Structure probing data (2A3) for a 177-nucleotide construct. Conditions: 150 mM KOAc, 10 mM MgCl2 and 150 mM bicine (pH 8.5), 24 C. Source: RMDB library OK1LIB, as collected in RNAgym.
[RMDB]
RNA sequence: GGGAACGACUCGAGUAGAGUCGAAAACAAAUGCCAUACCGGCUGUAAUGGCACCAUCACCAAUAACACUGACUAUUUUGCGAUUCUCUUGCUCUUUUUCAGCACAGAUAGCCAGGCCUAAAGCGGCCCCCGAUGGGACGUUCGCGUCCCAUCGGGGAAAAGAAACAACAACAACAAC
Reactivity to 2A3 in 0.01 (KOAc 150mM, MgCl2 10mM, bicine 150mM(pH8.5), 24C), signal-to-noise 2, nucleotides 027 to 126: c060a010a010a130u090g100c090c000a040u070a060c000c040g150g000c030u050g020u140a140a100u040g050g000c030a000c010c000a020u020c020a000c020c070a000a100u180a210a000c120a010c030u040g060a060c010u000a060u020u000u100u140g060c030g040a050u020u010c000u020c030u040u140g000c000u090c000u150u070u000u060u130c020a080g090c000a100c040a000g020a000u040a010g100c000c000a040g000g030c000c020u140a110a110a040g180c120g040g030c000